[RMDB]
The record gives the reactivity of an RNA of 207 nucleotides to 2A3 and DMS.

RNA sequence: GGGAACGACUCGAGUAGAGUCGAAAAUCAAAACUUACCAUAAAGCUACAGUAAUCAAAAUAGUCUGUUACUGGCAUAAGGAUAGAUACAUAGAUCAAUGGGAUAGAACUGAGAAUUGACAAAUAAACCCCACACAUCCAUGGUCAAUUUUUGGCAAUCAUUAAAUGAUCUUCGGAUCAUUUAAUGAAAAAGAAACAACAACAACAAC
Reactivity to 2A3 in 0.01 (KOAc 150mM, MgCl2 10mM, bicine 150mM(pH8.5), 24C), signal-to-noise 5, nucleotides 027 to 156: u060c000a010a030a020a070c030u070u080a080c040c020a070u140a090a160a020g030c040u090a110c030a020g010u050a030a080u130c110a070a100a130a250u170a080g110u050c100u080g020u030u030a040c030u020g000g000c020a070u070a110a030g030g030a020u050a080g040a010u070a120c040a040u110a060g050a030u050c040a040a070u080g020g000g050a030u060a130g070a070a030c060u060g020a010g050a120a050u060u070g020a040c030a010a130a020u160a070a080a060c010c020c000c010a030c010a000c000a050u030c050c020a040u060g040g000u010c010a020a040u040u040u010u030u030g040g000c030a020a040
Reactivity to DMS in 0.01 (KOAc 150mM, MgCl2 10mM, bicine 150mM(pH8.5), 24C), signal-to-noise 2, nucleotides 027 to 156: u010c060a050a050a120a120c040u000u010a110c050c020a120u000a070a100a160g030c020u000a020c040a030g030u010a040a090u010c070a080a100a120a170u000a160g010u010c050u000g010u000u000a040c060u000g010g060c090a100u000a080a060g020g010a120u000a080g020a100u000a050c040a070u000a070g000a080u000c060a090a040u000g010g000g010a150u000a060g010a050a030c050u000g020a080g020a020a090u000u000g010a030c030a030a080a140u010a090a080a080c030c010c000c020a070c080a060c070a090u000c010c020a110u000g010g010u000c000a020a030u000u000u000u000u000g000g000c020a080a150

For 2A3, 3,105 sequencing reads were counted. The reactions ran in a buffer of 150 mM KOAc, 10 mM MgCl2 and 150 mM bicine (pH 8.5), at 24 C.